RNA sequence: GGGAACGACUCGAGUAGAGUCGAAAAGCUAGUCGGAGACGACUAGCAACGAUCAGUUCGCUGAUCGGAACGUGCAUUCAAUUACGCUAGAAGCACGAAUAGGCGACGCCUAGCGUAAAACUGAGAAAGCAGAUAACAAAAAUAAAAAGGCGUCGCGCAGCAUUUAAUACUUCGGUAUUAAAUGCUGAAAAGAAACAACAACAACAAC
Reactivity to DMS in 0.01 (KOAc 150mM, MgCl2 10mM, bicine 150mM(pH8.5), 24C), signal-to-noise 1, nucleotides 027 to 156: g000c020u000a030g000u040c000g030g020a300g010a300c000g010a000c010u020a020g020c000a020a000c000g010a050u000c020a000g000u030u000c300g030c000u000g010a000u000c010g000g000a040a080c030g100u000g030c000a100u000u000c010a000a280u000u000a010c070g000c000u000a270g020a070a140g020c010a000c000g000a050a170u000a070g010g020c000g020a070c040g000c000c020u000a050g000c000g010u030a010a030a150a250c040u000g020a200g030a110a090a170g020c020a020g010a170u000a140a280c020a000a120a080a070a220u000a090a060a070a180a120g030g020c030g080u000c000g010c040g010
Reactivity to 2A3 in 0.01 (KOAc 150mM, MgCl2 10mM, bicine 150mM(pH8.5), 24C), signal-to-noise 3, nucleotides 027 to 156: g000c010u000a010g010u000c000g050g010a040g010a130c000g000a000c000u000a000g000c000a000a000c000g000a010u000c000a010g040u050u100c130g050c080u000g000a000u000c000g000g030a040a020c000g000u000g020c050a300u000u030c000a000a060u050u020a000c010g000c000u000a010g010a040a000g010c000a000c020g010a090a130u210a140g080g000c000g000a000c000g000c000c000u010a030g000c000g000u010a020a020a050a060c040u040g010a040g150a230a110a000g130c040a010g030a060u190a170a050c130a090a080a070a070a010u220a080a130a060a000a010g000g000c000g010u000c000g000c010g000
The data come from the RNA Mapping Database (RMDB), library OK3TST. This 207-nucleotide RNA was probed chemically with DMS and 2A3. Values cover nucleotides 27 to 156. The DMS profile rests on 1,754 reads. 2A3 adducts were read by reverse transcription with SuperScript II with manganese. The reactions ran in a buffer of 150 mM KOAc, 10 mM MgCl2 and 150 mM bicine (pH 8.5), at 24 C.